[RMDB]
RNA sequence: GGGAACGACUCGAGUAGAGUCGAAAAUGCUGUUCAAGUGGCAGUCGUCGGAGCAGGCGCCGCCGCUCGGCACCGUCGUGAAGGACGCGCCGGUGUUCUUCGCCAAGCAGGUGAUACACAACGCCUGACGUGACGUAGUCUUCGGACUACGUCACGUAAAAGAAACAACAACAACAAC
Reactivity to DMS in 0.01 (KOAc 150mM, MgCl2 10mM, bicine 150mM(pH8.5), 24C), signal-to-noise 1, nucleotides 027 to 126: u080g010c050u020g010u010u000c090a090a160g010u000g000g020c000a080g010u000c040g000u010c000g000g020a150g050c030a140g000g000c030g050c020c050g010c050c010g020c000u000c020g000g110c040a060c100c020g040u060c190g000u000g020a110a100g010g090a060c030g020c000g000c050c020g000g020u000g000u020u000c000u020u000c040g040c020c100a020a160g000c070a090g020g010u000g000a060u000a130c130a110c300a210a020c000g010c000c000u000g000
Reactivity to 2A3 in 0.01 (KOAc 150mM, MgCl2 10mM, bicine 150mM(pH8.5), 24C), signal-to-noise 2, nucleotides 027 to 126: u100g020c030u050g000u150u220c120a130a060g040u160g090g000c050a020g040u100c020g000u010c070g070g040a100g020c050a170g020g040c030g000c060c100g020c000c000g020c040u070c000g000g060c020a000c040c020g000u030c000g030u030g080a150a110g080g090a090c020g000c010g020c010c050g000g000u080g000u100u010c000u010u050c030g000c010c000a060a010g050c030a030g060g040u050g000a040u060a200c100a020c030a170a110c050g000c000c000u000g030
Background:
The data come from the RNA Mapping Database (RMDB), library OK1LIB. Chemical mapping of a 177-nucleotide RNA with DMS and 2A3. The RNA was probed in 150 mM KOAc, 10 mM MgCl2 and 150 mM bicine (pH 8.5) at 24 C. Values cover nucleotides 27 to 126. For DMS, 1,354 sequencing reads were counted.